[RMDB]
RNA sequence: GGGAACGACUCGAGUAGAGUCGAAAAGAUAUGGACGUGUGUCCGAGAGCAACAGCAGAUGUCGGAAACGACAUCUGACAUGCUCGGACCACGUCCUAAGUCAAAACCAUAACGUUCGCGUUAUGGACCCUAUGCAUCGCUUCGGCGAUGCAUAGGGAAAAGAAACAACAACAACAAC
Reactivity to DMS in 0.01 (KOAc 150mM, MgCl2 10mM, bicine 150mM(pH8.5), 24C), signal-to-noise 2, nucleotides 027 to 126: g000a050u020a300u000g000g020a020c000g020u000g020u010g020u020c000c000g010a020g020a080g020c220a090a190c230a190g000c000a000g000a020u000g000u000c000g010g010a130a080a260c010g000a010c000a000u000c000u000g000a030c090a160u000g010c020u000c010g000g010a010c010c020a000c000g000u000c010c010u010a020a090g030u000c040a050a020a150a200c020c000a000u000a000a000c000g010u000u010c220g020c010g010u000u000a000u000g000g010a120
Reactivity to 2A3 in 0.01 (KOAc 150mM, MgCl2 10mM, bicine 150mM(pH8.5), 24C), signal-to-noise 1, nucleotides 027 to 126: g010a020u040a050u120g020g000a000c000g010u050g080u110g010u080c000c000g020a030g010a010g090c130a030a190c040a100g000c000a000g010a020u000g000u020c010g000g050a110a060a030c020g000a000c010a020u000c000u030g030a010c010a090u120g060c000u000c120g010g000a030c010c000a020c000g000u010c000c000u000a000a000g040u010c020a040a030a040a180c000c000a010u000a000a020c010g000u060u100c300g000c000g250u000u040a010u010g010g000a030